RNA sequence: GGGAACGACUCGAGUAGAGUCGAAAAGCUCUGGAAUUGAGGCCCCUCUAACAAUAAUCCAAAACUACUUCGCAGAGUAAUUUGCCGAAUCGUAGGAUGCCCAUUACUAUCUAUUUUUGGAGCAUCUAAAACUGUCAGUGCUUCGGCACUGACAGAACAUCCAUACCAAGUUCGCUUGGUAUGGAUGAAAAGAAACAACAACAACAAC
Reactivity to DMS in 0.01 (KOAc 150mM, MgCl2 10mM, bicine 150mM(pH8.5), 24C), signal-to-noise 2, nucleotides 027 to 156: g030c000u020c010u000g020g010a070a100u000u000g000a090g000g020c020c010c010c050u000c050u010a150a120c050a090a090u000a100a070u000c070c030a040a050a110a110c040u000a060c020u000u000c080g040c070a070g000a090g020u010a070a140u010u010u000g010c000c030g020a070a090u000c040g010u000a160g000g000a040u000g020c010c000c000a070u000u010a070c110u000a090u000c130u000a150u000u000u000u000u010g040g000a080g010c000a020u010c000u010a020a060a130a120c000u000g000u010c000a020g010u000g010c000u000u000c300g000g030c010a020c000u000g010a010c000a000g030a030a180
Reactivity to 2A3 in 0.01 (KOAc 150mM, MgCl2 10mM, bicine 150mM(pH8.5), 24C), signal-to-noise 4, nucleotides 027 to 156: g020c000u000c000u020g060g050a140a060u130u060g030a070g040g050c010c010c020c020u080c070u110a100a100c080a060a090u160a050a050u070c030c030a030a050a050a060c020u060a020c010u020u020c020g020c070a000g000a010g080u090a090a110u050u040u020g060c040c020g040a030a080u080c080g030u050a030g010g060a000u000g000c000c000c000a010u030u010a030c050u070a060u190c060u070a230u130u080u010u020u010g040g000a130g010c000a000u000c010u030a010a000a040a090c000u000g000u000c000a000g000u000g000c000u020u050c080g020g000c010a000c010u000g000a000c000a000g000a000a000
Notes:
An RNA of 207 nucleotides, treated with DMS and 2A3 and read out base by base. For DMS the reverse transcriptase was MarathonRT.